An RNA of 177 nucleotides, treated with 2A3 and DMS and read out base by base. DMS adducts were read by reverse transcription with MarathonRT. The reactions ran in a buffer of 150 mM KOAc, 10 mM MgCl2 and 150 mM bicine (pH 8.5), at 24 C. For 2A3 the reverse transcriptase was SuperScript II with manganese. Reactivities are rounded to 0.1 and cut off at 0 and 3.
RNA sequence: GGGAACGACUCGAGUAGAGUCGAAAAGCCAAGCCUAUGUGCCCCUCUCCAUGCCCACCCACCAGCCCCACCAGAGAGGAUUGUGCACCCGGCAGCCCGCUCCCUGGAUCUGCAUUUUGGGGCUCCAAGUAGAUAAAUUGUUCGCAAUUUAUCUACUAAAAGAAACAACAACAACAAC
Reactivity to 2A3 in 0.01 (KOAc 150mM, MgCl2 10mM, bicine 150mM(pH8.5), 24C), signal-to-noise 2, nucleotides 027 to 126: g030c020c000a020a000g010c020c010u150a130u220g050u110g030c010c020c010c000u000c000u010c020c020a050u080g030c010c010c000a030c000c000c000a030c000c030a010g020c000c010c000c000a030c010c010a010g040a010g000a000g080g020a080u070u130g030u070g040c010a060c010c070c010g000g020c000a010g020c000c030c030g010c010u030c010c010c000u010g030g030a060u040c030u060g040c040a050u040u060u060u210g040g000g010g000c000u010c010c000a020
Reactivity to DMS in 0.01 (KOAc 150mM, MgCl2 10mM, bicine 150mM(pH8.5), 24C), signal-to-noise 6, nucleotides 027 to 126: g010c030c020a110a140g010c030c030u000a090u010g020u000g000c020c040c010c010u000c020u000c030c070a120u010g000c040c030c030a110c040c020c030a100c100c100a100g010c020c010c010c020a110c100c060a090g000a070g010a070g000g000a120u000u010g010u010g010c040a070c030c150c150g000g010c030a050g010c060c040c030g010c040u000c020c020c000u010g000g010a070u000c050u000g010c050a110u000u000u010u010g020g010g010g010c020u000c090c070a060